Record summary:
Conditions: 150 mM KOAc, 10 mM MgCl2 and 150 mM bicine (pH 8.5), 24 C. An RNA of 207 nucleotides, treated with DMS and 2A3 and read out base by base. Reactivities are given for positions 27 through 156. For 2A3, 1,551 sequencing reads were counted.
[RMDB]
RNA sequence: GGGAACGACUCGAGUAGAGUCGAAAAGGAUGUCCCGACCGGAGGCCGACAAUCCAGGGAACCGGAUGUCAUCACGUUGUUGCAGUACCAUAUGGCAUCUUAAAUCCGAUCUGCAAAUAAGCAUGUAAAAACCGGCAUACGUUCGCGUAUGCCGGAAGAUAGUAUGUCACUUCGGUGACAUACUAUCAAAAGAAACAACAACAACAAC
Reactivity to DMS in 0.01 (KOAc 150mM, MgCl2 10mM, bicine 150mM(pH8.5), 24C), signal-to-noise 1, nucleotides 027 to 156: g000g030a130u010g010u000c050c000c000g010a130c040c030g040g030a050g040g040c030c020g010a070c040a100a110u010c060c030a100g010g010g000a150a160c060c040g040g000a040u000g010u000c000a060u000c150a120c100g000u000u000g000u010u000g000c000a050g000u020a040c050c050a090u000a090u000g000g010c010a050u000c000u000u000a020a090a050u010c040c030g000a080u000c040u000g000c000a030a080a120u010a040a110g030c040a040u000g010u010a070a010a050a070a080c030c020g030g000c000a040u010a000c000g000u000u000c270g040c030g010u000a010u000g000c000c000g000g000a020a010
Reactivity to 2A3 in 0.01 (KOAc 150mM, MgCl2 10mM, bicine 150mM(pH8.5), 24C), signal-to-noise 3, nucleotides 027 to 156: g020g020a040u080g060u090c000c000c000g030a090c040c050g060g000a020g010g120c020c030g060a100c070a070a100u010c000c040a040g000g030g010a060a030c040c040g060g000a000u010g030u050c030a030u030c060a020c120g060u030u070g070u020u070g010c020a010g060u130a060c000c080a080u040a070u130g010g000c020a000u020c010u030u090a100a110a020u020c050c010g000a060u000c010u060g030c000a020a050a060u170a080a030g040c080a010u120g050u300a020a070a030a050a030c000c000g000g000c000a000u000a000c000g000u020u070c250g000c000g110u010a000u000g000c000c010g000g010a000a000